Chemical mapping of a 207-nucleotide RNA with 2A3 and DMS. The 2A3 profile rests on 1,039 reads. 2A3 adducts were read by reverse transcription with SuperScript II with manganese. Values are in units of 0.01, from 0 to 300, in steps of 10. As a SHAPE reagent, 2A3 marks flexible, mostly unpaired nucleotides at the ribose 2'-OH.

[RMDB]
RNA sequence: GGGAACGACUCGAGUAGAGUCGAAAAAGAACGAAUUUGUAUCAAAUAGAUCUGUUUUGAGCUUUGGCCAUUAUUUGGCUAAGAACUUCAGCCAUCUCAUCUCAGACAAAUUGGACAGCCUCUUUGAUACAUUUUCUAGUAGUCAAAAUGGGGCAGAGGUAAGAAGAGGUUUCGACCUCUUCUUACCAAAAGAAACAACAACAACAAC
Reactivity to 2A3 in 0.01 (KOAc 150mM, MgCl2 10mM, bicine 150mM(pH8.5), 24C), signal-to-noise 2, nucleotides 027 to 156: a010g050a040a000c070g000a020a000u020u070u030g020u050a050u030c000a000a030a060u070a100g100a200u070c000u000g030u000u000u010u010g030a010g040c030u150u100u070g020g100c000c020a040u110u140a140u150u300u150g020g000c000u000a050a070g040a040a040c030u160u100c120a010g020c030c020a040u020c010u020c000a020u000c000u000c000a010g000a030c070a080a160a050u140u120g070g020a010c010a050g050c010c010u000c000u010u010u000g000a000u000a000c030a040u010u010u030u030c000u000a030g110u030a000g030u030c060a010a040a060a210u140g000g000g060g010c070a020g090a030
Reactivity to DMS in 0.01 (KOAc 150mM, MgCl2 10mM, bicine 150mM(pH8.5), 24C), signal-to-noise 1, nucleotides 027 to 156: a080g040a100a070c090g000a060a030u000u000u010g040u010a040u000c040a010a050a100u010a100g000a030u000c020u000g020u000u000u000u010g030a020g080c210u000u000u000g020g000c030c000a100u000u000a080u000u000u010g060g010c030u000a050a090g000a040a130c060u010u010c170a190g030c020c020a120u000c000u040c050a120u000c060u000c040a050g020a060c040a050a050a070u030u000g000g010a120c000a110g000c050c010u010c040u000u000u000g020a020u000a040c000a050u020u000u020u000c050u010a190g040u000a060g050u000c090a020a010a130a130u000g020g010g010g030c030a060g010a140